[RMDB]
RNA sequence: GGGAACGACUCGAGUAGAGUCGAAAAAUAAACCGUUCUGCUCAGGUUCAGGCUCCGGCAGGCCUGACGGAUACUGAGUCCGAAUGCCGUUAUCAGAUGAGUGACCAGCUCACGCUUAAAGGCUGGUCCAGGUACAGCUAUUCGUAGCUGUACCUGGAAAAGAAACAACAACAACAAC
Reactivity to DMS in 0.01 (KOAc 150mM, MgCl2 10mM, bicine 150mM(pH8.5), 24C), signal-to-noise 3, nucleotides 027 to 126: a150u010a060a030a110c130c010g000u000u010c060u000g020c000u000c030a040g020g000u020u000c010a010g010g030c010u000c100c060g000g000c000a070g000g000c050c000u000g010a040c080g010g020a150u040a300c010u040g000a020g030u040c040c080g000a100a040u010g000c000c040g000u080u040a060u040c150a080g010a070u040g000a060g000u050g000a080c030c010a010g000c000u000c040a040c080g000c120u000u040a050a080a170g010g000c020u000g000g000u000
Reactivity to 2A3 in 0.01 (KOAc 150mM, MgCl2 10mM, bicine 150mM(pH8.5), 24C), signal-to-noise 5, nucleotides 027 to 126: a000u230a030a050a030c010c000g010u030u000c020u050g040c000u000c000a020g080g030u170u020c000a010g000g000c010u060c070c020g030g040c010a000g000g020c000c000u000g000a010c010g010g040a050u110a300c030u030g010a000g060u050c040c030g150a110a050u040g020c050c010g020u060u090a140u180c100a040g140a260u150g050a040g030u030g030a040c000c000a010g000c010u040c000a030c030g070c020u050u160a130a030a000g050g000c000u000g000g000u000